[RMDB]
Chemical mapping of a 207-nucleotide RNA with DMS and 2A3. Values are in units of 0.01, from 0 to 300, in steps of 10. Reactivities are given for positions 27 through 156. The DMS profile rests on 3,507 reads. It was measured as part of the RMDB library M2RFOK.
RNA sequence: GGGAACGACUCGAGUAGAGUCGAAAAGCAAGUCAGAGGGCGCUACCAUGCAAACUAGGGCUGGCUACUCUUGCACAGAAUCACCUUUCUAUAAUAACCAGUGCAAGAAGGGUUAUUAUACCAUUUAAAAAUCGUGAAUGCUUCGGCAUUCACGAAACUGCAUAAAAAACUUCGGUUUUUUAUGCAGAAAAGAAACAACAACAACAAC
Reactivity to DMS in 0.01 (KOAc 150mM, MgCl2 10mM, bicine 150mM(pH8.5), 24C), signal-to-noise 2, nucleotides 027 to 156: g040c020a040a090g010u000c030a100g030a080g020g020g030c300g070c040u000a060c060c100a100u000g040c030a100a290a180c060u000a060g020g020g000c010u010g040g040c030u000a140c010u010c010u000u010g000c000a040c050a070g000a060a160u000c060a090c020c040u000u010u010c090u010a060u000a030a040u000a030a010c000c010a300g010u000g000c030a040a030g000a080a090g010g010g030u010u000a020u000u000a030u000a110c170c050a170u000u000u000a030a110a120a080a130u010c000g030u000g010a020a010u010g020c000u000u000c300g050g010c000a000u000u000c010a010c010g000a000a020a060
Reactivity to 2A3 in 0.01 (KOAc 150mM, MgCl2 10mM, bicine 150mM(pH8.5), 24C), signal-to-noise 6, nucleotides 027 to 156: g010c010a000a010g010u010c010a000g010a010g050g000g000c000g000c010u110a300c100c090a090u250g000c010a020a030a030c010u010a010g000g010g010c000u010g020g000c000u060a060c000u000c000u000u010g000c000a000c000a010g100a080a100u100c040a200c060c010u120u290u180c090u090a010u000a010a010u000a000a000c000c000a010g000u000g010c010a000a010g010a010a010g010g000g000u000u000a000u010u010a010u010a040c010c030a120u150u230u300a060a130a050a050a070u050c000g000u000g000a000a000u000g000c000u030u040c110g070g010c010a000u000u000c000a000c000g000a000a000a000